[RMDB]
RNA sequence: GGGAACGACUCGAGUAGAGUCGAAAAGAUAUGGACGUGAACUACAAGGACCGGCUCCUUUGAUCCACGUUUUCGUCGGAAACGACGAAAACGUGGGGAGGAGCCUAGUACUUGCACGUCCUAAGUCCUUAUGGCUAAUGUUCGCAUUAGCCAUAAGAAAAGAAACAACAACAACAAC
Reactivity to 2A3 in 0.01 (KOAc 150mM, MgCl2 10mM, bicine 150mM(pH8.5), 24C), signal-to-noise 2, nucleotides 027 to 126: g060a020u140a070u300g000g000a000c010g020u010g020a110a180c120u190a070c300a030a000g010g000a000c020c020g020g040c000u020c020c000u300u300u070g050a040u030c000c000a000c000g000u010u010u000u010c010g000u000c010g000g020a070a110a090c040g020a000c030g000a010a010a000a000c000g000u010g020g010g000g000a010g000g000a000g050c010c000u000a010g000u000a000c000u000u010g000c010a000c000g010u000c000c000u000a020a000g010u010c010
Reactivity to DMS in 0.01 (KOAc 150mM, MgCl2 10mM, bicine 150mM(pH8.5), 24C), signal-to-noise 3, nucleotides 027 to 126: g010a060u000a260u000g010g000a020c010g030u000g010a110a050c080u010a300c010a010a010g000g010a140c300c280g000g000c010u000c000c010u000u000u010g000a050u010c000c000a000c000g010u000u000u000u000c000g030u000c020g000g000a140a160a300c010g000a010c000g000a000a010a000a000c000g020u000g010g000g000g000a000g020g010a010g000c000c000u000a010g020u000a120c000u000u010g000c010a010c000g010u000c010c010u000a020a110g030u000c050

Chemical mapping of a 177-nucleotide RNA with 2A3 and DMS. For 2A3 the reverse transcriptase was SuperScript II with manganese. The reactions ran in a buffer of 150 mM KOAc, 10 mM MgCl2 and 150 mM bicine (pH 8.5), at 24 C. Values cover nucleotides 27 to 126.